Chemical mapping of a 207-nucleotide RNA with 2A3. Conditions: 150 mM KOAc, 10 mM MgCl2 and 150 mM bicine (pH 8.5), 24 C.

RNA sequence: GGGAACGACUCGAGUAGAGUCGAAAAAUCGUCAAUCUGCGCAACGUGUUCCAAUACCUGAUUUACAAUCGCGUCCGACGUCGGCAGGUGGACGUCCGGAUAGUCGGCCGGGAUCGCGAUGUGCUCCAGCACCUGAUUGACCGUCAGGUAGGACACCGGGGAGGAUAAGUUUCGACUUAUCCUCCCCAAAAGAAACAACAACAACAAC
Reactivity to 2A3 in 0.01 (KOAc 150mM, MgCl2 10mM, bicine 150mM(pH8.5), 24C), signal-to-noise 2, nucleotides 027 to 156: a010u100c030g080u050c010a040a090u020c060u120g000c010g050c120a060a040c070g020u000g040u170u040c010c000a040a010u000a090c000c000u090g000a110u120u080u110a160c150a060a050u050c010g000c020g050u000c010c020g010a050c000g020u030c020g020g070c000a020g000g040u070g020g040a000c050g020u010c060c030g020g000a050u070a020g060u060c010g010g010c030c020g060g110g000a120u120c090g050c000g030a050u010g020u010g000c070u080c070c010a020g000c060a030c020c040u070g030a070u110u120g110a170c060c000g000u000c000a010g030g000u000a010g030g010a030c030a000c020c050